[RMDB]
Structure probing data (DMS and 2A3) for a 170-nucleotide construct. DMS adducts were read by reverse transcription with MarathonRT. It was measured as part of the RMDB library 15KLIB. The RNA was probed in 150 mM KOAc, 10 mM MgCl2 and 150 mM bicine (pH 8.5) at 24 C. The 2A3 profile rests on 15,166 reads.
RNA sequence: GGGAACGACUCGAGUAGAGUCGAAAAUGGUCCCAGCCUCCUCGCUGGCGCCGGCUGGGCAACAUUCCGAGGGGACCGUCCCUCGGUAAUGGCGAAUGGGACCCAGAACUCUCUCUAGAUUCCCAGACACCGUGGAGCUUCGGCUCCACGAAAAGAAACAACAACAACAAC
Reactivity to DMS in 0.01 (KOAc 150mM, MgCl2 10mM, bicine 150mM(pH8.5), 24C), signal-to-noise 3, nucleotides 027 to 129: u060g050g010u020c110c020c010a080g020c090c040u040c050c060u020c140g060c060u030g030g040c070g050c010c050g020g020c010u060g000g010g070c050a100a120c040a050u020u000c000c030g100a060g010g030g060g000a150c220c230g110u140c000c000c000u000c000g010g000u010a000a060u000g030g040c030g040a070a110u080g020g030g020a000c010c000c120a050g000a090a010c000u000c020u010c020u060c020u000a060g020a260u000u000c040c000c030a060g040a080c120a130c090
Reactivity to 2A3 in 0.01 (KOAc 150mM, MgCl2 10mM, bicine 150mM(pH8.5), 24C), signal-to-noise 6, nucleotides 027 to 129: u110g010g000u000c000c010c000a000g010c000c000u050c000c020u070c090g000c020u040g070g040c040g060c080c010g010g030c020u050g010g020g020c020a020a010c010a040u010u000c000c000g000a000g000g020g010g060a140c050c030g300u300c000c000c000u000c010g000g000u030a010a030u020g020g000c040g090a090a100u080g000g020g000a020c010c020c000a020g020a100a040c000u000c010u010c000u000c000u000a000g000a080u000u010c000c000c000a000g040a030c090a030c010